[RMDB]
RNA sequence: GGGAACGACUCGAGUAGAGUCGAAAAUUAGAGACGGGGUUUCACUGUGUUGCCUGGGCUGGUCUUGAACUCUUGACUUCAGGUGAUCUGCCUGCCUCAGCCUCCCAAAGUGCUGGGAUUGCAUGCGAAGCAUUAGUAGGUUCGCCUACUAAUGCUUAAAAGAAACAACAACAACAAC
Reactivity to DMS in 0.01 (KOAc 150mM, MgCl2 10mM, bicine 150mM(pH8.5), 24C), signal-to-noise 9, nucleotides 027 to 126: u010u010a100g010a080g010a050c060g010g000g010g010u000u000u000c060a150c060u000g010u000g010u000u000g010c060c020u000g000g010g010c070u000g000g010u000c040u000u000g000a060a080c090u000c040u000u000g000a070c060u000u000c030a060g000g010u000g000a050u000c040u000g000c020c020u000g010c040c020u000c020a060g000c040c050u000c020c020c020a050a060a090g010u000g010c020u000g010g010g010a110u010u000g000c030a040u000g010c140g010
Reactivity to 2A3 in 0.01 (KOAc 150mM, MgCl2 10mM, bicine 150mM(pH8.5), 24C), signal-to-noise 5, nucleotides 027 to 126: u120u050a040g000a000g030a040c040g000g020g020g020u040u150u170c050a040c050u060g020u020g050u160u060g010c020c020u020g000g030g020c080u060g010g010u050c000u030u080g050a120a080c040u030c000u170u080g050a090c010u070u020c070a010g000g030u030g030a070u030c030u050g080c010c000u010g030c010c000u000c010a020g010c010c010u040c010c010c010a040a080a010g120u130g010c020u020g030g020g050a090u070u170g020c030a040u070g040c040g070
Overview:
An RNA of 177 nucleotides, treated with DMS and 2A3 and read out base by base. High DMS reactivity at an A or C suggests that its Watson-Crick edge is free. The data come from the RNA Mapping Database (RMDB), library OK2TRN. Conditions: 150 mM KOAc, 10 mM MgCl2 and 150 mM bicine (pH 8.5), 24 C. 2A3 adducts were read by reverse transcription with SuperScript II with manganese.